[RMDB]
The record gives the reactivity of an RNA of 177 nucleotides to DMS and 2A3. In probing experiments dimethyl sulfate is read out at A N1 and C N3, which are open when not base-paired. The RNA was probed in 150 mM KOAc, 10 mM MgCl2 and 150 mM bicine (pH 8.5) at 24 C. Values are in units of 0.01, from 0 to 300, in steps of 10. For 2A3, 1,262 sequencing reads were counted. DMS adducts were read by reverse transcription with MarathonRT. As a SHAPE reagent, 2A3 marks flexible, mostly unpaired nucleotides at the ribose 2'-OH. Source: RMDB library OK2TRN, as collected in RNAgym.

RNA sequence: GGGAACGACUCGAGUAGAGUCGAAAAACAAGGUUACUGUGGGUACCCUUGUGGCUAAUGAAGGCUGGAACGCCUCUGAGGACGCCCUCACAGCUGUCAUCACCGCCGCCUACCUUACCAUUUGUCAGUACUGUUCCCUUUUCGAAGGGAACAGUACAAAAGAAACAACAACAACAAC
Reactivity to DMS in 0.01 (KOAc 150mM, MgCl2 10mM, bicine 150mM(pH8.5), 24C), signal-to-noise 2, nucleotides 027 to 126: a020c010a020a010g020g010u000u000a030c020u020g020u010g020g030g010u000a070c150c010c000u000u000g020u010g000g000c060u000a050a080u010g010a120a040g000g010c010u020g000g020a070a110c150g000c030c010u010c060u010g020a160g010g010a090c170g010c040c030c060u010c050a050c080a060g010c030u000g000u000c030a040u010c060a030c070c070g020c010c010g000c030c000u000a070c030c000u010u010a120c060c070a100u000u010u010g000u010c090a110
Reactivity to 2A3 in 0.01 (KOAc 150mM, MgCl2 10mM, bicine 150mM(pH8.5), 24C), signal-to-noise 1, nucleotides 027 to 126: a000c010a020a020g040g000u010u000a020c060u140g130u300g300g130g000u060a010c000c000c000u000u000g020u040g020g000c020u080a090a000u110g140a150a000g030g010c060u070g060g050a090a060c080g030c010c000u020c030u000g020a100g000g060a050c050g030c040c010c000u010c000a050c020a020g010c020u050g060u070c010a020u060c020a030c000c010g000c000c000g070c000c010u070a080c030c000u070u030a050c030c000a100u030u060u140g160u050c070a100